Notes: The data come from the RNA Mapping Database (RMDB), library M2RFPK. The record gives the reactivity of an RNA of 207 nucleotides to 2A3.
RNA sequence: GGGAACGACUCGAGUAGAGUCGAAAACGGGGUUGGAUCCGACUCUCAUAGGCUCUCCAACCCAACUCCUACUCAAUACGUCCUCGUCGUACAGAACGGUAACAUGUUUUCCGAACAUCCGCUCUUGCAAACCUGCCAAAGUUCGCUUUGGCAGGAAGAGCAAGAACAGGUUCGCCUGUUCUUGCUCAAAAGAAACAACAACAACAAC
Reactivity to 2A3 in 0.01 (KOAc 150mM, MgCl2 10mM, bicine 150mM(pH8.5), 24C), signal-to-noise 2, nucleotides 027 to 156: c040g000g000g020g000u020u020g010g010a120u300c000c070g100a120c080u120c050u050c180a210u270a220g010g000c010u010c000u000c040c000a010a010c000c000c000a000a000c030u010c000c000u000a010c000u010c030a070a000u090a160c040g000u000c000c040u100c030g240u040c020g010u080a030c050a070g010a020a010c020g010g060u110a200a060c080a130u080g040u020u020u050u050c080c170g070a030a030c020a000u030c020c000g000c030u000c000u040u000g020c060a080a060a120c000c000u000g000c000c000a000a000a000g020u070u110c080g030c080u040u000u000g000g000c000a000g000g000a000a000
2A3 adducts were read by reverse transcription with SuperScript II with manganese. The RNA was probed in 150 mM KOAc, 10 mM MgCl2 and 150 mM bicine (pH 8.5) at 24 C.